[RMDB]
RNA sequence: GGGAACGACUCGAGUAGAGUCGAAAACCUGUCAUCAUCACCUUCUUGUCCGUGCUCAUCAGCAUCUCAGACAAGUUACUAUGCUGGGAAAAUCAGGACCUCACACUUAGAUGAUCUUCUUAGAACCUGCCAACUCAAUCUUCGGAUUGAGUUGGCAAAAAGAAACAACAACAACAAC
Reactivity to 2A3 in 0.01 (KOAc 150mM, MgCl2 10mM, bicine 150mM(pH8.5), 24C), signal-to-noise 2, nucleotides 027 to 126: c000c080u100g030u080c050a060u060c090a000u040c000a090c000c090u150u070c000u010u060g020u010c000c020g030u030g020c030u050c000a210u000c020a040g000c000a120u040c030u080c030a070g000a130c040a040a030g010u000u030a130c070u150a000u040g000c030u000g060g080g070a000a000a000a220u050c020a040g020g050a090c050c000u010c000a010c000a020c000u010u090a010g040a060u070g020a020u000c020u010u000c000u000u110a020g050a120a080c010c000
Source: RMDB library RFM100, as collected in RNAgym. Chemical mapping of a 177-nucleotide RNA with 2A3. Reactivities are rounded to 0.1 and cut off at 0 and 3. Values cover nucleotides 27 to 126. For 2A3 the reverse transcriptase was SuperScript II with manganese.